[RMDB]
RNA sequence: GGGAACGACUCGAGUAGAGUCGAAAAGAUAUGGAACUAAGCAACAGCCAUGUGGUCGGAAACGACCAUAUGGACAUGCUUAUUCCUAAGUCAAAUCCCCUGUCAAUGUUCGCAUUGACAGGGGAAACCAAGAAAGGAAGUUCGCUUCCUUUCUUGGAAAAGAAACAACAACAACAAC
Reactivity to 2A3 in 0.01 (KOAc 150mM, MgCl2 10mM, bicine 150mM(pH8.5), 24C), signal-to-noise 4, nucleotides 027 to 126: g020a000u030a020u070g010g010a010a050c180u030a010a020g000c000a000a130c060a200g160c010c000a000u010g000u000g010g010u000c010g010g000a060a020a020c000g010a010c010c030a010u000a000u010g000g050a020c010a010u010g000c000u000u000a000u000u010c000c000u010a050a010g030u010c010a000a060a220u050c010c000c000c000u000g000u000c000a000a000u010g020u030u120c300g020c180a000u010u010g000a000c000a000g010g000g000g000a000a000a000
Reactivity to DMS in 0.01 (KOAc 150mM, MgCl2 10mM, bicine 150mM(pH8.5), 24C), signal-to-noise 5, nucleotides 027 to 126: g000a020u000a180u010g000g000a010a020c300u000a000a010g020c010a010a100c300a130g000c010c000a000u000g030u000g000g000u000c000g010g000a050a040a110c000g010a010c000c000a000u000a000u000g000g010a120c070a080u000g000c000u000u000a040u000u000c000c000u010a030a120g000u000c010a080a110a150u000c000c000c000c010u000g000u000c000a000a000u000g000u000u010c190g020c010a010u000u000g010a000c000a010g000g000g000g000a000a000a040
This 177-nucleotide RNA was probed chemically with 2A3 and DMS. DMS adducts were read by reverse transcription with MarathonRT. Reactivities are given for positions 27 through 126. The RNA was probed in 150 mM KOAc, 10 mM MgCl2 and 150 mM bicine (pH 8.5) at 24 C.